Chemical mapping of a 207-nucleotide RNA with 2A3.
The data come from the RNA Mapping Database (RMDB), library RNAMAK.
Conditions: 150 mM KOAc, 10 mM MgCl2 and 150 mM bicine (pH 8.5), 24 C.

RNA sequence: GGGAACGACUCGAGUAGAGUCGAAAACAGAGAUGCUUCGGCAUCUCUGAAAAAAACCUUUGUGUCCACAGGCUUUCAACGCCACUGGACCCAUUGGGUCCUGUGGUAUCAAGCCGUGGACACUCUGGUAAAAAAGUGCAGGUUUCGACCUGCACAACUUGGAGUAAGGUUUCGACCUUACUCCAAGAAAAGAAACAACAACAACAAC
Reactivity to 2A3 in 0.01 (KOAc 150mM, MgCl2 10mM, bicine 150mM(pH8.5), 24C), signal-to-noise 2, nucleotides 027 to 156: c020a000g000a000g000a020u000g020c050u090u170c270g150g020c030a010u010c000u000c020u020g000a000a000a000a000a000a000a000c000c010u000u000u000g010u000g010u010c010c020a110c260a220g000g000c000u000u010u100c100a020a020c030g000c000c000a000c010u010g010g020a000c040c000c000a300u100u300g010g010g000u010c000c000u030g000u000g000g000u010a000u040c020a000a000g010c000c020g000u000g000g020a000c000a000c000u010c000u000g010g000u090a060a150a060a000a000a040g000u000g040c000a000g000g060u070u070u300c300g050a010c000c000u000g000c000a000c000a000a020